[RMDB]
RNA sequence: GGGAACGACUCGAGUAGAGUCGAAAACUGCAAUGCUAUUAAUGAUUGUCAGCAAAGAGGAACCACGAAAUGAGAUUUUGCGAUUCAUAAAUCUCUCGUCUAUUUCCAUUUGAAUAUCAUCAACCCCAUGUAGUACGUAAUUCGUUACGUACUACAUAAAAGAAACAACAACAACAAC
Reactivity to 2A3 in 0.01 (KOAc 150mM, MgCl2 10mM, bicine 150mM(pH8.5), 24C), signal-to-noise 9, nucleotides 027 to 126: c020u030g010c030a050a060u080g080c040u140a090u300u180a300a140u190g050a030u040u080g100u190c060a020g010c040a070a040a010g140a070g020g010a010a010c040c020a010c040g030a040a090a130u180g000a010g010a010u020u030u030u070g070c130g100a090u100u220c030a030u160a110a030a020u000c010u000c010u010c010g020u000c020u050a130u040u040u000c010c020a030u020u020u080g070a100a050u100a050u170c070a010u030c030a020a090c000c000c000c000
Reactivity to DMS in 0.01 (KOAc 150mM, MgCl2 10mM, bicine 150mM(pH8.5), 24C), signal-to-noise 9, nucleotides 027 to 126: c030u000g010c100a050a070u000g020c070u010a290u010u000a090a080u000g010a040u000u010g010u010c130a070g000c030a030a050a060g000a130g010g000a030a050c300c290a030c030g000a030a100a110u010g010a030g000a070u000u000u000u000g010c220g010a190u010u010c110a040u010a010a010a010u000c010u000c000u000c050g010u000c090u000a160u010u000u000c010c010a130u000u000u000g010a060a090u010a050u000c080a040u010c100a040a110c040c000c010c100
The data come from the RNA Mapping Database (RMDB), library OK2TRN.
This 177-nucleotide RNA was probed chemically with 2A3 and DMS.
The RNA was probed in 150 mM KOAc, 10 mM MgCl2 and 150 mM bicine (pH 8.5) at 24 C.
DMS adducts were read by reverse transcription with MarathonRT.